[RMDB]
RNA sequence: GGGAACGACUCGAGUAGAGUCGAAAACAGGGGCAGACCUUCUCCACUGGCUGACCCAGGAGGGUCAGGGGUCAGAGGCCACAAAGCAGCAUGGAGAGGCCGGGAGUGCAGGGGCUGGGAGGGCCAGCUCACGGUAAAUGUUCGCAUUUACCGUGAGAAAAGAAACAACAACAACAAC
Reactivity to DMS in 0.01 (KOAc 150mM, MgCl2 10mM, bicine 150mM(pH8.5), 24C), signal-to-noise 2, nucleotides 027 to 126: c110a150g000g010g030g030c210a100g000a130c030c010u000u000c020u000c020c020a120c020u000g000g030c010u000g020a030c000c000c020a170g020g000a170g000g010g040u000c040a060g020g020g010g020u000c040a110g010a140g000g000c010c020a100c100a070a090a050g000c030a070g030c090a140u000g000g000a050g020a100g000g000c050c030g000g030g010a200g020u010g000c160a100g000g000g000g000c080u000g000g000g000a140g020g000g000c070c100a040g020
Reactivity to 2A3 in 0.01 (KOAc 150mM, MgCl2 10mM, bicine 150mM(pH8.5), 24C), signal-to-noise 2, nucleotides 027 to 126: c020a010g030g000g030g020c030a030g020a150c000c000u130u050c040u030c020c010a030c040u010g070g000c000u030g000a030c000c000c010a020g190g200a240g040g040g020u000c020a010g030g030g000g030u010c060a090g160a070g230g000c000c010a120c070a040a170a000g050c020a000g000c030a090u080g000g000a020g010a020g000g000c000c040g050g020g000a140g050u230g010c100a050g050g020g020g000c090u100g020g000g080a170g020g010g000c010c010a040g010